[RMDB]
RNA sequence: GGGAACGACUCGAGUAGAGUCGAAAAAUAGGCUUAUCAAGAGAGGUGGAGGGACUGCCCCGAUGAAACCCGGCAGCCAGAAAUGGUGCCAAUUCCUGCAGCGGAAACGUUGAAAGAUGAGCCGAUGACCGGAGAUGGUUCGCCAUCUCCAAAAGAAACAACAACAACAAC
Reactivity to DMS in 0.01 (KOAc 150mM, MgCl2 10mM, bicine 150mM(pH8.5), 24C), signal-to-noise 7, nucleotides 027 to 129: a100u060a070g010g000c030u000u000a020u000c040a080a050g000a100g040a110g020g000u010g010g020a060g040g010g000a210c160u050g000c120c050c050c030g070a100u060g000a080a120a060c050c050c080g000g000c000a040g070c000c000a040g020a080a090a080u000g010g010u000g030c020c020a050a080u060u030c070c010u000g040c070a020g040c010g040g030a090a080a100c060g020u010u010g000a090a060a080g010a030u010g000a020g020c000c020g020a070u080g000a080c100c080
Reactivity to 2A3 in 0.01 (KOAc 150mM, MgCl2 10mM, bicine 150mM(pH8.5), 24C), signal-to-noise 9, nucleotides 027 to 129: a010u170a050g000g000c010u020u010a020u030c070a120a020g060a000g010a030g060g010u020g000g030a030g010g000g020a030c050u160g120c030c000c000c000g170a230u050g010a010a010a010c010c000c000g010g000c010a050g240c000c000a000g030a010a050a020u040g000g000u000g000c000c000a010a020u060u060c000c020u090g050c010a000g000c020g020g030a050a040a020c030g020u030u040g050a100a080a020g000a010u000g000a010g000c000c000g000a060u110g050a010c020c030
Conditions: 150 mM KOAc, 10 mM MgCl2 and 150 mM bicine (pH 8.5), 24 C. Structure probing data (DMS and 2A3) for a 170-nucleotide construct. The DMS profile rests on 36,751 reads.